[RMDB]
RNA sequence: GGGAACGACUCGAGUAGAGUCGAAAAACUUAUGCAGCUUCGGCUGCAUAAGUAAAAAAGAUAUGGACGCAAGUGGACAUGCGUGCUCGGAAACGAGUCACGCAACAGCCACUGCGUCCUAAGUCAAAAAAGGAAAAUUAGUUCGCUAAUUUUCCAACUACUCAUUAGCCUUCGGGCUAAUGAGUAGAAAAGAAACAACAACAACAAC
Reactivity to 2A3 in 0.01 (KOAc 150mM, MgCl2 10mM, bicine 150mM(pH8.5), 24C), signal-to-noise 1, nucleotides 027 to 156: a000c000u010u010a000u000g000c010a000g030c020u100u100c250g220g000c000u000g020c010a020u000a000a000g000u010a000a000a000a000a000a000g010a000u020a000u040g000g010a000c010g030c040a160a210g020u020g010g080a230c100a300u030g000c010g000u000g010c000u010c000g000g010a010a010a000c000g010a000g150u170c000a000c000g010c010a020a010c020a010g020c010c000a010c010u000g010c010g000u000c000c000u000a000a000g000u010c000a000a000a000a000a000a270g040g020a000a030a040a000u020u020a010g050u000u030c220g000c190u000a000a010u010u000u000u000c000c000a000a000